The data come from the RNA Mapping Database (RMDB), library OK1LIB.
Chemical mapping of a 177-nucleotide RNA with DMS and 2A3.
The RNA was probed in 150 mM KOAc, 10 mM MgCl2 and 150 mM bicine (pH 8.5) at 24 C.
[RMDB]
RNA sequence: GGGAACGACUCGAGUAGAGUCGAAAAGCGACUGACCAGCACCUCGCCACGCGACCGGGACUAGCGCGCCCGCUGACGCGUCGUCGCAAUCCAGCCGAGGGUCGCCAGCGUUGCCACCACAUAGACCGAAAAUGGCGAUAUUCGUAUCGCCAUUUUCAAAAGAAACAACAACAACAAC
Reactivity to DMS in 0.01 (KOAc 150mM, MgCl2 10mM, bicine 150mM(pH8.5), 24C), signal-to-noise 2, nucleotides 027 to 126: g000c010g030a070c020u000g020a050c010c020a120g000c000a180c030c000u000c060g030c030c040a020c160g020c000g000a070c070c040g000g020g030a120c110u000a020g000c190g000c100g040c080c040c020g000c070u030g000a020c080g000c050g040u040c110g030u000c020g040c040a140a170u050c030c020a020g040c000c000g010a110g000g000g000u000c020g000c000c120a090g030c060g000u000u000g000c000c000a160c030c010a040c080a050u000a110g020a170c110c000
Reactivity to 2A3 in 0.01 (KOAc 150mM, MgCl2 10mM, bicine 150mM(pH8.5), 24C), signal-to-noise 3, nucleotides 027 to 126: g040c000g040a060c030u040g030a050c000c050a030g010c000a020c000c020u000c040g030c020c020a030c030g020c000g000a010c020c000g060g000g020a070c050u110a070g050c000g000c000g010c080c030c010g040c120u120g030a020c030g010c010g020u030c010g020u020c020g010c060a010a030u030c020c040a020g050c030c020g010a070g060g000g000u070c020g010c010c000a040g010c020g030u010u040g020c000c020a070c010c000a050c020a080u130a030g050a030c000c090